[RMDB]
RNA sequence: GGGAACGACUCGAGUAGAGUCGAAAAAAAAAGAUAUGGACUUAUGGAGUUGACACGCUUUGAUCUCUACUCGGAAACGAGUAGAGGGAGCGUGAGAACAACGUUGAAAUAAGUCCUAAGUCAAAAAUCGUAAUCUAUACUUCGGUAUAGAUUACGAAAAAGAAACAACAACAACAAC
Reactivity to 2A3 in 0.01 (KOAc 150mM, MgCl2 10mM, bicine 150mM(pH8.5), 24C), signal-to-noise 1, nucleotides 027 to 126: a050a000a020a000a000g080a040u170a060u110g000g000a000c010u020u000a030u070g080g060a140g020u030u010g060a050c000a010c000g050c010u300u300u070g070a140u020c000u010c000u010a010c000u010c000g010g000a030a050a030c000g010a020g010u000a000g000a010g010g000g000a000g000c000g000u030g000a020g020a030a010c010a000a020c000g200u090u070g000a070a030a000u020a000a000g000u000c000c000u020a070a010g040u040c040a060a010a000a060a240
Reactivity to DMS in 0.01 (KOAc 150mM, MgCl2 10mM, bicine 150mM(pH8.5), 24C), signal-to-noise 2, nucleotides 027 to 126: a030a040a110a100a080g000a020u010a300u010g000g000a010c010u000u000a000u000g010g010a080g000u000u000g010a230c000a010c000g000c010u000u000u000g010a060u020c000u000c000u000a010c000u000c000g020g000a090a110a060c000g000a000g010u000a000g000a010g000g000g000a000g020c000g020u000g000a040g000a100a090c000a010a010c020g010u010u010g020a170a100a000u000a000a020g000u000c000c010u000a010a060g000u010c010a040a120a150a100a040
Structure probing data (2A3 and DMS) for a 177-nucleotide construct. It was measured as part of the RMDB library TTRDES. DMS adducts were read by reverse transcription with MarathonRT.